[RMDB]
Structure probing data (2A3) for a 207-nucleotide construct. As a SHAPE reagent, 2A3 marks flexible, mostly unpaired nucleotides at the ribose 2'-OH. 2A3 adducts were read by reverse transcription with SuperScript II with manganese.
RNA sequence: GGGAACGACUCGAGUAGAGUCGAAAAUUCAACCCCAAAAAUCUAGUGCAAAUAUUGUCUUAAUUACUUAGGCUAAAAGAAAUAAGUAUUAAAGCGGGACAAGGCAUCGACAUUUGAUACAAAAAUUUUUAGCAUAUUAGAUUCGUCUAAUAUGCAAACCUAUUGGUUACUUCGGUAACCAAUAGGUAAAAGAAACAACAACAACAAC
Reactivity to 2A3 in 0.01 (KOAc 150mM, MgCl2 10mM, bicine 150mM(pH8.5), 24C), signal-to-noise 1, nucleotides 027 to 156: u010u020c000a000a080c000c000c000c000a010a260a050a010a150u020c100u070a040g010u040g000c010a000a020a300u060a140u130u030g070u010c000u010u100a090a030u090u040a140c000u000u040a010g010g040c000u140a050a000a300a000g050a020a120a010u070a070a000g050u010a040u000u160a060a100a030g060c070g050g030g010a000c010a030a000g040g000c000a010u060c080g060a060c010a050u030u130u100g050a040u130a090c120a030a130a050a190a190u080u180u040u140u180a010g000c000a000u010a000u000u000a000g000a000u000u030c030g000u000c080u000a010a010u000a000u000g000c000a000a000